[RMDB]
RNA sequence: GGGAACGACUCGAGUAGAGUCGAAAAAAUGCAAUACCAUCAUUGACUUCGAACACUCUGACUAUAAUAGUGCCAGAUAAGCAGGUUUUUGAUCAGGUUGUGGAUAAUGUGUAUGUCACCUAUGCUGAACUGACGAUACUUUCGAGUAUCGUCAGUUAAAAGAAACAACAACAACAAC
Reactivity to DMS in 0.01 (KOAc 150mM, MgCl2 10mM, bicine 150mM(pH8.5), 24C), signal-to-noise 4, nucleotides 027 to 126: a050a040u000g010c050a060a080u000a070c050c060a060u000c060a050u000u010g010a070c050u010u000c090g020a080a080c130a070c230u000c020u000g000a040c030u000a070u000a080a080u010a110g020u000g020c000c010a050g010a050u010a060a100g010c050a030g010g010u010u000u010u000u000g010a060u000c070a050g010g010u010u000g030u000g000g010a070u000a050a050u000g020u000g020u000a070u010g010u000c080a040c030c060u000a080u010g020c090u000g010
Reactivity to 2A3 in 0.01 (KOAc 150mM, MgCl2 10mM, bicine 150mM(pH8.5), 24C), signal-to-noise 2, nucleotides 027 to 126: a000a000u150g020c080a060a060u010a100c010c010a030u020c030a050u030u100g050a050c040u020u000c070g030a090a010c020a010c120u000c010u020g040a020c010u050a000u060a300a220u110a100g090u030g110c030c010a020g050a070u020a040a030g110c020a040g000g000u000u010u000u120u080g050a080u060c020a010g110g000u070u060g050u050g070g040a080u050a090a070u190g010u010g030u130a060u170g040u040c000a030c010c010u030a030u190g030c030u070g070